[RMDB]
RNA sequence: GGGAACGACUCGAGUAGAGUCGAAAAACGCUAGUGAGUCACCCCUUGCUAACGAUGGUGUGACAUUUUCUGAUGCAGUCGACGCCUCAGACACGGGAAAUUCAACCCCGGGAAUGGACGUGACCAACAUCGUGAGUGCUUUCGAGCACUCACGAUGAAAAGAAACAACAACAACAAC
Reactivity to DMS in 0.01 (KOAc 150mM, MgCl2 10mM, bicine 150mM(pH8.5), 24C), signal-to-noise 1, nucleotides 027 to 126: a170c090g000c000u000a010g030u000g020a040g000u000c060a120c060c070c060c090u000u000g020c120u040a150a100c170g010a130u000g010g010u000g030u000g000a150c030a070u000u000u000u000c050u000g000a070u000g030c200a140g040u000c070g000a120c080g000c000c000u020c000a110g000a300c140a020c000g060g000g000a080a020a100u000u000c300a110a130c230c000c000c030g000g010g000a040a130u010g000g020a040c020g000u000g000a070c000c030a090a170